[RMDB]
RNA sequence: GGGAACGACUCGAGUAGAGUCGAAAACGGUGUCUGAACCCUGUUCUGCCAACAAUAAACGCAGUGAUUUAGCUGAGUGUUCAUCAGACAUAGCUGCAUAGCGGGGGGAGAACUCAAGGCAUUGCUAUCAUAUCGUGAGGUUCGCCUCACGAUAUGAAAAAGAAACAACAACAACAAC
Reactivity to DMS in 0.01 (KOAc 150mM, MgCl2 10mM, bicine 150mM(pH8.5), 24C), signal-to-noise 4, nucleotides 027 to 126: c080g010g010u000g010u000c000u000g000a170a120c030c010c020u000g000u000u000c010u000g000c000c020a020a030c050a080a250u000a020a090a170c260g000c030a010g000u000g010a270u010u010u000a080g010c000u000g000a040g000u000g010u000u010c230a090u010c020a010g010a050c070a040u010a270g010c000u000g000c010a070u000a040g020c300g000g010g000g010g000g000a040g020a010a020c020u010c060a060a060g000g010c010a020u000u000g010c280u010a140
Reactivity to 2A3 in 0.01 (KOAc 150mM, MgCl2 10mM, bicine 150mM(pH8.5), 24C), signal-to-noise 3, nucleotides 027 to 126: c010g000g050u010g020u020c010u010g050a080a090c000c010c010u020g030u030u000c010u070g200c020c010a070a060c010a010a060u080a150a130a030c120g000c000a000g010u020g080a140u020u110u300a050g010c020u010g020a030g030u150g240u280u180c090a200u010c000a050g060a060c010a010u080a020g020c010u000g020c010a030u040a030g040c050g010g000g000g000g000g000a010g000a010a010c000u000c050a040a000g010g020c020a030u020u060g050c010u080a100

This 177-nucleotide RNA was probed chemically with DMS and 2A3. 2A3 adducts were read by reverse transcription with SuperScript II with manganese. The data come from the RNA Mapping Database (RMDB), library OK2TST. The DMS profile rests on 3,509 reads. For DMS the reverse transcriptase was MarathonRT. Values cover nucleotides 27 to 126.